Overview:
An RNA of 177 nucleotides, treated with 2A3 and read out base by base. Values cover nucleotides 27 to 126. The reactions ran in a buffer of 150 mM KOAc, 10 mM MgCl2 and 150 mM bicine (pH 8.5), at 24 C.

[RMDB]
RNA sequence: GGGAACGACUCGAGUAGAGUCGAAAAUUGUGUGUAUCGGCGUUGUGCUUUAAUAAUAUGCGCAUUGAAUCCGAAAGUGUUCCCUGCAAUAUAAAAAAUUCAGGGGAAGAUGGGCAGUUGUGUUUCACUACCCAAUAGGUUUCGACCUAUUGGGUAGAAAAGAAACAACAACAACAAC
Reactivity to 2A3 in 0.01 (KOAc 150mM, MgCl2 10mM, bicine 150mM(pH8.5), 24C), signal-to-noise 2, nucleotides 027 to 126: u090u160g030u000g060u040g020u100a000u000c000g000g000c070g080u020u060g040u030g000c050u040u140u060a180a040u220a040a000u130a110u230g010c070g000c020a000u000u180g050a000a160u000c000c000g030a090a150a020g100u180g130u030u000c000c000c010u000g000c030a000a000u080a020u150a110a060a090a000a100a010u030u020c030a040g010g000g000g020a010a010g090a080u070g000g080g130c120a170g000u000u060g000u000g000u000u000u000c040a000